[RMDB]
RNA sequence: GGGAACGACUCGAGUAGAGUCGAAAACGGCGUUGUGCUACAAUUGAUGCGCGAUGAAGCCGAAAGAGUUCCCUGCAAUAAUGAUCGAGGGGAAGGUGGGCAGUUGGGUUUCAUCUCUACCAUUGAAUUCCGGAAUAAUGUUCGCAUUAUUCCGGAAAAAAGAAACAACAACAACAAC
Reactivity to DMS in 0.01 (KOAc 150mM, MgCl2 10mM, bicine 150mM(pH8.5), 24C), signal-to-noise 4, nucleotides 027 to 126: c030g000g020c020g000u000u010g020u000g000c010u010a290c170a150a120u010u020g010a150u040g010c010g010c020g050a020u020g030a090a160g010c010c010g000a030a050a140g010a140g010u000u000c000c000c000u010g010c130a250a150u030a070a040u040g000a100u000c090g010a080g000g010g000g010a060a060g010g020u010g020g000g050c040a070g020u010u010g000g000g000u010u010u010c050a030u010c030u000c010u000a070c060c040a080u000u000g000a060a130
Reactivity to 2A3 in 0.01 (KOAc 150mM, MgCl2 10mM, bicine 150mM(pH8.5), 24C), signal-to-noise 2, nucleotides 027 to 126: c020g000g000c010g020u000u060g000u000g010c000u050a040c030a030a180u120u200g060a140u130g020c020g000c030g000a000u060g260a080a030g000c000c000g080a040a100a000g080a000g030u040u020c000c000c000u000g000c000a060a100u160a050a060u080g040a020u080c110g050a020g000g120g050g000a030a000g000g060u110g050g000g010c010a010g000u060u020g100g000g000u000u080u020c040a100u000c000u000c020u060a060c010c000a050u050u160g040a090a090